Overview:
Structure probing data (2A3) for a 177-nucleotide construct. The RNA was probed in 150 mM KOAc, 10 mM MgCl2 and 150 mM bicine (pH 8.5) at 24 C. For 2A3 the reverse transcriptase was SuperScript II with manganese. Values cover nucleotides 27 to 126. The data come from the RNA Mapping Database (RMDB), library OK1LIB.

[RMDB]
RNA sequence: GGGAACGACUCGAGUAGAGUCGAAAAAUAGCACCUAGUUCAUCGUAUUCAAUGCAUGAUGUGCAUGAAGCUGGUGGCGUCCCAGCAAUUAUUAAUGAAUUGAUGAAGAAAGAUGGCACGUUACACCGCCUGGAGCCUCAUUCGUGAGGCUCCAGGCAAAAGAAACAACAACAACAAC
Reactivity to 2A3 in 0.01 (KOAc 150mM, MgCl2 10mM, bicine 150mM(pH8.5), 24C), signal-to-noise 2, nucleotides 027 to 126: a010u230a090g110c040a030c010c000u030a110g190u000u000c000a000u030c000g010u040a030u010u030c020a070a070u000g060c000a000u220g050a190u250g220u060g080c000a030u050g060a060a000g000c030u000g000g000u130g090g020c020g020u020c030c000c000a000g000c000a000a010u070u100a070u040u240a140a090u070g020a020a040u030u000g000a030u000g000a000a030g150a200a090a000g130a040u110g000g000c060a000c130g000u010u140a030c090a000c000c000